[RMDB]
The record gives the reactivity of an RNA of 177 nucleotides to DMS and 2A3. Source: RMDB library OK2TST, as collected in RNAgym. For 2A3 the reverse transcriptase was SuperScript II with manganese. The DMS profile rests on 8,607 reads. The 2A3 profile rests on 7,460 reads. As a SHAPE reagent, 2A3 marks flexible, mostly unpaired nucleotides at the ribose 2'-OH. Reactivities are given for positions 27 through 126. Conditions: 150 mM KOAc, 10 mM MgCl2 and 150 mM bicine (pH 8.5), 24 C.
RNA sequence: GGGAACGACUCGAGUAGAGUCGAAAAUAUCGUGAGGCUGCUGGGGGUGUGCGCCUUGGGCAGACCCAUGUGCCUGCUCUUCGAGUACAUGGCUCCUGGCGAUCUAAGCGAGUUCUUGCGCGCCUGCGACUUCUUCCUUUUUCGAAAGGAAGAAGUCAAAAGAAACAACAACAACAAC
Reactivity to DMS in 0.01 (KOAc 150mM, MgCl2 10mM, bicine 150mM(pH8.5), 24C), signal-to-noise 5, nucleotides 027 to 126: u010a090u000c030g010u000g000a170g010g010c110u000g020c010u010g010g010g010g010g010u000g020u000g010c050g010c020c030u000u000g010g010g020c050a020g000a040c060c030c230a100u010g010u010g030c010c000u000g010c060u000c030u010u000c100g010a080g010u010a040c010a070u010g050g010c030u010c000c010u010g010g010c020g010a030u000c030u010a080a250g000c010g000a060g010u000u000c040u000u000g010c090g010c100g010c090c020u000g010c230
Reactivity to 2A3 in 0.01 (KOAc 150mM, MgCl2 10mM, bicine 150mM(pH8.5), 24C), signal-to-noise 4, nucleotides 027 to 126: u150a040u050c020g010u030g050a040g050g000c030u020g000c010u040g030g000g010g000g040u070g020u020g030c030g010c000c000u010u030g020g000g010c020a010g030a070c010c020c060a180u170g090u180g010c000c010u020g000c010u010c000u090u090c090g030a050g010u010a020c020a050u050g200g020c000u000c000c010u020g020g000c020g010a020u000c030u080a070a040g020c020g040a030g030u080u060c050u060u070g030c080g000c020g050c040c030u060g030c030